[RMDB]
RNA sequence: GGGAACGACUCGAGUAGAGUCGAAAAUCGUCUCAUCCCCACCGUCAUCCCCACAAAAAGUGCCAAAUGAGACACGCUCCGACGUUGAGGACAAGUUCGAUAAAUUGAUGGCUGAAACGUCAUCAAAUGACUAGGGAGGUUUCGACCUCCCUAGUCAAAAAGAAACAACAACAACAAC
Reactivity to DMS in 0.01 (KOAc 150mM, MgCl2 10mM, bicine 150mM(pH8.5), 24C), signal-to-noise 1, nucleotides 027 to 126: u000c130g000u020c000u000c150a140u040c000c010c000c010a050c020c070g000u030c040a230u000c030c000c000c010a080c160a010a040a090a050a020g010u010g000c030c050a090a200a190u010g000a090g010a060c070a140c060g020c180u000c030c040g010a070c090g020u000u000g030a030g010g010a020c060a080a210g000u020u000c030g000a130u000a090a040a120u000u000g000a000u000g020g010c000u000g000a040a030a030c130g030u000c000a000u000c010a000a030a140